The record gives the reactivity of an RNA of 177 nucleotides to DMS. Conditions: 150 mM KOAc, 10 mM MgCl2 and 150 mM bicine (pH 8.5), 24 C.
RNA sequence: GGGAACGACUCGAGUAGAGUCGAAAAGAUAUGGACUAGAGCUCACGAUCUUGGAUUUAUAGGUGAAAUUAUGUCGGAAACGACAUAUGAGUAACCUAUUGUCAGAUCGGAGCUCUAGUCCUAAGUCCUAUCUGCUACACUUCGGUGUAGCAGAUAGAAAAGAAACAACAACAACAAC
Reactivity to DMS in 0.01 (KOAc 150mM, MgCl2 10mM, bicine 150mM(pH8.5), 24C), signal-to-noise 1, nucleotides 027 to 126: g010a080u010a250u010g020g010a080c000u010a000g000a000g000c000u000c000a120c010g030a010u000c030u000u000g020g020a020u000u020u000a020u000a000g010g010u000g010a240a190a280u000u000a000u000g020u000c000g010g000a180a160a280c000g000a020c000a000u000a010u000g000a030g030u000a070a020c000c000u000a000u000u010g000u000c010a020g000a010u000c000g010g000a010g000c000u000c000u000a000g000u000c000c000u000a000a070g020u000c030